Chemical mapping of a 177-nucleotide RNA with DMS and 2A3. Source: RMDB library TTRDEL, as collected in RNAgym. The reactions ran in a buffer of 150 mM KOAc, 10 mM MgCl2 and 150 mM bicine (pH 8.5), at 24 C. High DMS reactivity at an A or C suggests that its Watson-Crick edge is free. DMS adducts were read by reverse transcription with MarathonRT.

RNA sequence: GGGAACGACUCGAGUAGAGUCGAAAAGAUAUGGACUGUCUGUCGACUAGGACGUUGAAAUCGGAAACGAUGGAGUCCUAGCGAACGACAGCAGUCCUAAGUCAAAAGAUACAGUUCGCUGUAUCAAUCGAUAAAGAUCGUUCGCGAUCUUUAUCGAAAAAGAAACAACAACAACAAC
Reactivity to DMS in 0.01 (KOAc 150mM, MgCl2 10mM, bicine 150mM(pH8.5), 24C), signal-to-noise 4, nucleotides 027 to 126: g010a020u000a300u000g000g010a010c010u010g000u020c010u000g010u000c000g010a180c000u000a010g000g010a020c000g000u010u010g030a080a070a030u000c010g000g000a110a110a220c010g000a000u000g000g020a080g000u000c000c010u000a010g010c080g010a080a110c020g000a010c000a000g000c000a010g010u000c000c000u000a020a040g010u000c040a090a060a130a130g000a010u000a000c000a010g020u000u010c270g010c000u000g000u000a000u000c000a090a110
Reactivity to 2A3 in 0.01 (KOAc 150mM, MgCl2 10mM, bicine 150mM(pH8.5), 24C), signal-to-noise 3, nucleotides 027 to 126: g040a020u090a050u140g000g010a010c010u020g070u300c010u000g000u020c020g020a140c010u010a000g010g000a010c040g070u300u070g010a020a040a010u020c000g020g040a060a050a050c020g000a010u010g030g020a020g000u010c000c000u000a000g000c010g030a090a050c010g000a000c000a000g000c000a000g010u000c000c000u000a030a000g030u000c010a000a050a070a110g010a010u000a000c000a000g040u070u120c200g130c150u000g000u000a000u000c000a010a100